[RMDB]
RNA sequence: GGGAACGACUCGAGUAGAGUCGAAAAAAAUGGAUGAUCAAACUAAGAAGGACGGCUUAGAUAUUGUUCAUGUUGAGUUCAGUCCGGAUACAAGAGCGCCAAGCGAUAGCAAUAAAGUAAUAACAGACUACGCGAUAUAUUUCGAUAUAUCGCGUAGAAAAGAAACAACAACAACAAC
Reactivity to 2A3 in 0.01 (KOAc 150mM, MgCl2 10mM, bicine 150mM(pH8.5), 24C), signal-to-noise 2, nucleotides 027 to 126: a000a000a000u100g030g020a060u030g000a010u040c020a040a000a120c040u070a040a050g020a030a040g100g010a000c030g040g010c020u050u020a050g040a150u080a080u080u150g120u100u060c050a000u040g020u060u070g060a080g020u050u090c010a000g020u000c000c000g020g000a000u040a090c050a040a010g030a020g040c040g000c010c000a000a000g010c030g040a050u130a030g020c010a030a080u180a230a060a030g100u080a030a120u170a110a050c040a010g080a030
Reactivity to DMS in 0.01 (KOAc 150mM, MgCl2 10mM, bicine 150mM(pH8.5), 24C), signal-to-noise 4, nucleotides 027 to 126: a040a080a030u000g000g000a050u000g020a050u000c070a060a100a140c120u000a020a020g000a290a130g020g000a050c080g000g000c000u000u000a010g020a100u000a050u020u000g000u000u010c060a030u000g030u000u000g010a060g000u000u000c080a120g030u000c020c010g000g020a120u000a030c100a040a080g010a090g030c040g000c050c030a030a080g020c050g010a050u000a040g010c070a010a090u010a030a080a070g000u020a060a060u000a060a080c100a100g000a170